[RMDB]
RNA sequence: GGGAACGACUCGAGUAGAGUCGAAAAUGGAAAGUGAAGUGGUGUGAUGAAGGAGCUUCUAUGCACCCUUGUGAUGACACAUACUGUGGCCCUUUUCCAGAAUCUGAGCCGGAAGUGAAGGCUGUAGAUACGCAGCUGGGUUCGCCCAGCUGCGUAUAAAAGAAACAACAACAACAAC
Reactivity to DMS in 0.01 (KOAc 150mM, MgCl2 10mM, bicine 150mM(pH8.5), 24C), signal-to-noise 1, nucleotides 027 to 126: u000g000g000a050a030a110g030u010g000a040a020g000u000g040g010u000g010u000g000a100u010g030a020a020g000g000a270g000c110u000u010c020u000a200u000g020c040a050c020c000c000u010u000g040u010g000a100u000g000a110c000a020c030a110u030a120c190u000g010u000g020g010c060c010c000u000u000u000u000c020c040a090g020a050a110u000c060u000g000a020g020c020c010g010g010a140a120g020u010g000a120a160g000g000c000u000g020u000a060g010

An RNA of 177 nucleotides, treated with DMS and read out base by base.
It was measured as part of the RMDB library OK2TST.
The reactions ran in a buffer of 150 mM KOAc, 10 mM MgCl2 and 150 mM bicine (pH 8.5), at 24 C.
For DMS, 899 sequencing reads were counted.